[RMDB]
Structure probing data (DMS and 2A3) for a 177-nucleotide construct. For 2A3 the reverse transcriptase was SuperScript II with manganese. Reactivities are given for positions 27 through 126. Source: RMDB library TTRDES, as collected in RNAgym. The DMS profile rests on 3,283 reads.

RNA sequence: GGGAACGACUCGAGUAGAGUCGAAAAGAUAUGGAAGCGAGUGGUGAGCAACAGCUACGUUCGGAAACGAACGUAGACAUGCUCGCCACCGCUUCCUAAGUCAAACGCUUCGGGUUCGCCCGAAGCGCACUUCGACAAAGUUCGCUUUGUCGAAGUGAAAAGAAACAACAACAACAAC
Reactivity to DMS in 0.01 (KOAc 150mM, MgCl2 10mM, bicine 150mM(pH8.5), 24C), signal-to-noise 3, nucleotides 027 to 126: g000a040u010a300u000g000g000a010a010g000c010g000a120g050u000g000g020u020g010a020g000c000a060a130c300a140g020c010u000a000c010g020u000u000c000g010g000a090a120a260c000g020a010a000c000g010u000a000g000a010c130a120u000g010c000u000c010g010c000c000a010c010c000g010c000u000u000c000c000u010a000a080g000u000c040a110a140a300c010g010c010u000u000c000g000g010g020u020u020c260g010c000c000c000g000a010a000g010c000g010
Reactivity to 2A3 in 0.01 (KOAc 150mM, MgCl2 10mM, bicine 150mM(pH8.5), 24C), signal-to-noise 2, nucleotides 027 to 126: g010a030u080a050u190g000g020a000a000g010c010g130a150g170u000g000g030u010g020a000g020c010a010a160c040a160g030c010u010a000c000g010u000u010c020g050g000a090a050a050c000g010a010a000c000g000u000a000g000a010c000a000u040g010c000u000c010g000c000c000a000c010c000g000c000u010u010c000c000u010a010a000g000u000c020a010a050a050c020g000c010u010u000c000g100g070g000u080u130c300g190c050c000c000g000a010a000g000c010g000